The record gives the reactivity of an RNA of 177 nucleotides to DMS and 2A3. For DMS the reverse transcriptase was MarathonRT. Reactivities are given for positions 27 through 126. Source: RMDB library OK2TST, as collected in RNAgym. The reactions ran in a buffer of 150 mM KOAc, 10 mM MgCl2 and 150 mM bicine (pH 8.5), at 24 C. For 2A3 the reverse transcriptase was SuperScript II with manganese.

[RMDB]
RNA sequence: GGGAACGACUCGAGUAGAGUCGAAAAUCAAAAGCACCAAUAUGGUGUAUACAUCCGUUGGAUACAGGAGUUUUUGCCUGUUCUUGAAAAUCAGAAUUUGGCUGAAAGCUACGAAUUCAUUAAGCCAAGCCACAUUACCAUUCGUGGUAAUGUGGCUAAAAGAAACAACAACAACAAC
Reactivity to DMS in 0.01 (KOAc 150mM, MgCl2 10mM, bicine 150mM(pH8.5), 24C), signal-to-noise 1, nucleotides 027 to 126: u000c080a080a060a100a220g010c000a000c030c000a160a200u010a090u000g020g020u000g000u000a050u000a020c160a070u020c010c030g000u000u000g030g000a020u010a040c150a240g010g000a020g020u000u000u000u000u000g000c010c010u010g020u000u000c000u000u010g000a090a080a150a080u000c110a000g000a010a060u000u000u000g000g000c000u000g000a040a050a000g000c010u000a060c070g010a120a060u000u000c010a020u010u000a080a110g020c090c030a110
Reactivity to 2A3 in 0.01 (KOAc 150mM, MgCl2 10mM, bicine 150mM(pH8.5), 24C), signal-to-noise 1, nucleotides 027 to 126: u050c040a030a000a000a110g030c040a010c000c000a020a000u190a240u300g020g020u040g000u000a040u000a040c030a030u000c020c100g110u100u070g000g040a030u040a170c060a070g020g110a000g060u050u000u070u080u060g030c020c020u080g000u010u000c030u000u120g030a140a060a000a040u170c000a000g030a000a020u230u110u070g000g010c060u110g010a000a000a000g010c030u060a040c120g050a030a020u060u080c040a060u190u160a030a030g080c050c030a020